The data come from the RNA Mapping Database (RMDB), library OK2TST. Chemical mapping of a 177-nucleotide RNA with 2A3 and DMS.
RNA sequence: GGGAACGACUCGAGUAGAGUCGAAAAGAUAGUUCGGGCUUUCACGGGUGAUGGCAACGCCAUGCGAAUGGCUUUCGCGCAGGCCCGCAUUGGAAAUGCGCACGAAGGUGGCCUUCUCGCGGAAUUACUAGCUGCUAGUAUUCGUACUAGCAGCUAGAAAAGAAACAACAACAACAAC
Reactivity to 2A3 in 0.01 (KOAc 150mM, MgCl2 10mM, bicine 150mM(pH8.5), 24C), signal-to-noise 2, nucleotides 027 to 126: g070a030u130a020g020u050u070c040g060g030g000c050u080u040u060c090a040c030g090g010g010u090g030a110u100g050g000c020a080a030c050g030c000c030a010u110g020c010g050a070a040u040g020g020c000u000u040u080c070g000c010g070c080a010g040g000c010c000c000g000c030a050u020u150g020g040a020a080a090u060g010c040g010c000a020c150g070a040a050g060g060u060g030g030c010c000u020u040c010u040c030g000c040g030g040a050a080u160u150a130
Reactivity to DMS in 0.01 (KOAc 150mM, MgCl2 10mM, bicine 150mM(pH8.5), 24C), signal-to-noise 3, nucleotides 027 to 126: g010a130u000a070g020u010u000c030g020g020g010c080u000u000u000c090a080c050g000g000g000u000g020a070u010g020g010c050a060a120c130g000c010c010a020u010g000c190g000a150a060u000g020g050c020u000u000u000c100g010c000g030c140a030g000g000c260c000c020g000c130a020u010u000g030g020a060a270a080u010g010c030g010c060a150c150g000a090a110g020g030u010g000g010c010c040u000u010c040u000c020g010c020g000g010a050a070u010u010a120
The reactions ran in a buffer of 150 mM KOAc, 10 mM MgCl2 and 150 mM bicine (pH 8.5), at 24 C.